[RMDB]
RNA sequence: GGGAACGACUCGAGUAGAGUCGAAAAGUAAUGCCGCCGUUUGCGAUGGUCGCGGCUAUUUCUGCGUUCGCUAGCGGGGUCAGCGCAACGUCCUUUUGGCCGAUACUGGUCAUCCCUAGUGCGGCGCAUCCCACGGUCGGUUCGCCGACCGUGGGAUAAAAGAAACAACAACAACAAC
Reactivity to 2A3 in 0.01 (KOAc 150mM, MgCl2 10mM, bicine 150mM(pH8.5), 24C), signal-to-noise 1, nucleotides 027 to 126: g040u050a000a180u180g010c000c010g030c000c000g050u050u070u150g080c070g000a120u020g020g030u000c000g000c000g140g010c000u010a080u000u050u000c000u130g000c000g000u000u000c020g000c070u000a120g030c070g000g020g000g010u100c040a020g000c000g000c100a050a000c030g030u050c000c040u050u120u070u020g000g000c010c100g020a030u030a170c050u250g000g010u000c000a030u010c000c080c000u040a030g040u000g230c000g000g000c000g000c000